Chemical mapping of a 207-nucleotide RNA with 2A3 and DMS.

RNA sequence: GGGAACGACUCGAGUAGAGUCGAAAACGCAUCUACCCCUUCCCAUGCGGACCGCGUUCAGUGCGAGCUGUCUGAACUUCCGUGGCACAUUAUCAGCGUAGGGAUGGUUGAUGGUAAGCCCGCCUUCGGUACACCUGGAUAUUGCAAGCCAUGUGGAUGUGUAACUGUCUUUCGAGACAGUUACACAAAAAGAAACAACAACAACAAC
Reactivity to 2A3 in 0.01 (KOAc 150mM, MgCl2 10mM, bicine 150mM(pH8.5), 24C), signal-to-noise 3, nucleotides 027 to 156: c090g000c020a030u040c030u080a090c000c000c020c050u010u020c000c020c000a030u080g020c010g040g000a070c050c080g010c030g020u000u050c010a040g010u130g290c080g090a090g060c110u090g060u060c030u040g040a040a040c000u090u010c040c010g040u020g060g010c030a030c000a070u080u250a030u120c050a040g020c030g070u060a130g050g000g000a010u020g030g030u010u050g030a060u050g010g040u030a010a040g010c010c010c010g060c010c010u090u080c010g070g010u040a030c020a010c030c020u000g010g000a010u020a060u060u230g020c050a070a020g010c000c000a020u050g010u020g040g050a060
Reactivity to DMS in 0.01 (KOAc 150mM, MgCl2 10mM, bicine 150mM(pH8.5), 24C), signal-to-noise 1, nucleotides 027 to 156: c060g030c030a090u000c040u000a100c050c010c030c070u000u070c020c020c040a170u000g020c000g000g000a060c170c030g040c080g010u000u000c080a060g020u000g030c020g010a080g000c020u000g060u000c040u010g000a070a050c030u010u010c050c010g000u020g050g040c010a070c030a130u000u010a030u000c040a180g030c030g080u000a040g030g000g000a060u000g010g000u000u000g010a110u000g000g020u000a120a210g000c000c010c040g000c040c020u000u000c050g030g000u000a100c050a070c040c000u020g020g020a080u000a070u000u000g030c070a040a150g000c100c020a040u010g010u000g010g020a130

The RNA was probed in 150 mM KOAc, 10 mM MgCl2 and 150 mM bicine (pH 8.5) at 24 C. 2A3 is a SHAPE reagent: it acylates the 2'-hydroxyl of flexible nucleotides of all four kinds.